[RMDB]
RNA sequence: GGGAACGACUCGAGUAGAGUCGAAAAUACGAAGGUUACAGAUCUGACUACUUACACCUUGCAAUUGGGGUAACUUCAAUCUCAAAGAAGGGCAACAGUCAUAACACAGCAUAUCUCACUCCGGUUGCAUUUCAAUACUUUUUCUAUUGGUGGCAUAGUUACCGUUCUCUUUCGAGAGAACGGUAACAAAAGAAACAACAACAACAAC
Reactivity to DMS in 0.01 (KOAc 150mM, MgCl2 10mM, bicine 150mM(pH8.5), 24C), signal-to-noise 1, nucleotides 027 to 156: u010a080c070g040a120a070g020g030u010u000a190c070a100g030a050u000c050u000g010a170c050u030a070c070u010u010a110c040a120c010c030u000u000g020c060a080a200u000u000g030g020g020g040u000a000a080c020u000u030c100a060a220u010c010u000c050a050a150a150g020a080a110g050g000g030c060a090a160c030a070g070u000c040a050u010a150a090c020a190c020a080g000c070a170u000a120u000c020u000c020a060c050u010c000c010g020g040u000u010g000c000a060u000u000u010c120a070a120u020a000c060u000u010u010u010u000c070u000a150u000u000g020g030u010g010g040c090a110u000a070
Reactivity to 2A3 in 0.01 (KOAc 150mM, MgCl2 10mM, bicine 150mM(pH8.5), 24C), signal-to-noise 3, nucleotides 027 to 156: u180a030c070g020a040a010g060g000u100u070a040c030a080g060a090u080c040u090g060a080c040u070a060c010u120u030a030c030a030c040c040u030u080g000c010a040a080u010u030g010g000g010g000u010a000a070c000u030u030c060a100a190u120c080u090c160a090a160a020g040a000a000g040g050g000c020a060a030c020a080g130u150c030a080u060a170a020c050a020c040a050g010c010a050u090a150u130c090u010c040a010c010u000c000c000g020g000u000u020g010c020a040u020u110u160c040a050a030u090a110c010u100u130u060u020u050c060u130a090u070u110g030g010u010g070g030c040a090u150a130